About this RNA:
The record gives the reactivity of an RNA of 177 nucleotides to DMS.
RNA sequence: GGGAACGACUCGAGUAGAGUCGAAAAAGUGAUUAAGUAUUUGAGAAUUCGUUCAGACCCUUGAAUCUUCAUGCAAGGGCAGGAAGAUGACUUCAAGAAGUGGCCCAAAACAGGAACUGUAAACAUGAACUCGUACGACUUUCGAGUCGUACGAGUUAAAAGAAACAACAACAACAAC
Reactivity to DMS in 0.01 (KOAc 150mM, MgCl2 10mM, bicine 150mM(pH8.5), 24C), signal-to-noise 1, nucleotides 027 to 126: a060g010u000g010a130u000u000a050a150g050u000a060u000u000u000g010a200g000a070a160u020u000c090g010u020u010c010a180g000a180c000c000c010u000u000g000a110a080u000c100u000u010c210a090u010g020c000a060a060g000g030g040c180a020g000g000a040a060g000a030u000g020a210c190u000u000c110a010a150g020a060a040g000u040g000g010c030c000c000a030a000a030a050c130a060g000g010a050a130c030u000g060u000a040a060a010c120a150u010g020

The reactions ran in a buffer of 150 mM KOAc, 10 mM MgCl2 and 150 mM bicine (pH 8.5), at 24 C. DMS adducts were read by reverse transcription with MarathonRT. For DMS, 535 sequencing reads were counted.